[RMDB]
RNA sequence: GGGAACGACUCGAGUAGAGUCGAAAACGCUAGAUCGCCCCACUCGUCGGGCUCAUCGACCGGGUGCUUGUCGUAGGCCGCAUAGCUGGCAUCCACCUCGGCCGAUCGAUGACGAGCCAGUAAUGCCUGAAUGAAAUAGGUUCGCCUAUUUCAUUCAAAAAGAAACAACAACAACAAC
Reactivity to 2A3 in 0.01 (KOAc 150mM, MgCl2 10mM, bicine 150mM(pH8.5), 24C), signal-to-noise 9, nucleotides 027 to 126: c020g000c040u050a050g010a290u120c050g050c010c000c010c010a010c010u010c000g020u010c000g010g020g060c200u120c070a010u000c000g020a020c000c010g010g000g010u010g010c030u020u030g020u020c150g300u090a120g190g100c030c030g090c160a100u220a160g010c030u080g010g000c010a010u020c010c010a000c000c020u190c080g000g000c000c000g000a010u010c010g010a010u020g010a000c000g000a000g010c000c000a030g000u070a070a070u100g050c030c050
Reactivity to DMS in 0.01 (KOAc 150mM, MgCl2 10mM, bicine 150mM(pH8.5), 24C), signal-to-noise 8, nucleotides 027 to 126: c150g010c040u000a070g010a110u000c080g020c070c000c010c070a300c030u010c020g020u000c020g000g010g020c210u010c140a010u000c010g000a020c020c010g000g000g010u000g010c050u000u010g020u000c010g010u010a130g000g000c000c060g010c220a080u010a120g020c020u000g010g000c010a030u000c180c010a020c020c010u010c030g030g010c010c010g010a010u000c030g010a060u010g000a030c010g000a020g010c050c040a060g010u000a100a090u000g000c080c180

Annotation:
Chemical mapping of a 177-nucleotide RNA with 2A3 and DMS. The RNA was probed in 150 mM KOAc, 10 mM MgCl2 and 150 mM bicine (pH 8.5) at 24 C. For DMS, 15,899 sequencing reads were counted.